[RMDB]
RNA sequence: GGGAACGACUCGAGUAGAGUCGAAAAAAGGAGUGGCAGGGCCUCCAGGUCCGCUAUUCGACCACAUGCCUUUUGGAGAUGAUCAUGGCCGGGCCGGGGAAGCGAAGAGCUUCCAAGAUUUGUGUCAAAAUGUGCACAUAUUCGUAUGUGCACAUUUAAAAGAAACAACAACAACAAC
Reactivity to 2A3 in 0.01 (KOAc 150mM, MgCl2 10mM, bicine 150mM(pH8.5), 24C), signal-to-noise 5, nucleotides 027 to 126: a010a000g070g010a020g000u040g010g000c080a060g060g000g010c000c010u090c110c030a040g010g000u010c000c000g010c050u040a070u050u150c100g050a140c000c000a030c000a070u300g050c010c000u030u060u040u050g030g020a090g020a050u110g020a020u080c060a070u080g070g000c020c010g000g000g010c010c000g040g010g000g020a010a000g010c010g020a090a050g030a060g090c000u000u000c000c000a000a000g030a010u090u100u120g070u020g030u060c030a020
Reactivity to DMS in 0.01 (KOAc 150mM, MgCl2 10mM, bicine 150mM(pH8.5), 24C), signal-to-noise 8, nucleotides 027 to 126: a040a040g000g010a050g040u000g000g010c020a120g040g000g000c010c000u040c200c270a160g010g010u000c000c010g010c160u000a030u020u020c120g000a160c000c010a050c050a090u020g020c020c020u000u010u010u000g010g000a220g000a070u010g000a090u010c040a080u010g010g000c030c020g000g010g000c010c020g000g010g000g010a010a010g000c010g000a100a110g000a270g000c000u000u010c010c010a100a060g010a100u020u010u010g000u000g000u000c080a090
An RNA of 177 nucleotides, treated with 2A3 and DMS and read out base by base. DMS adducts were read by reverse transcription with MarathonRT. Source: RMDB libraries RFM100 and RFMREP, as collected in RNAgym. 2A3 adducts were read by reverse transcription with SuperScript II with manganese.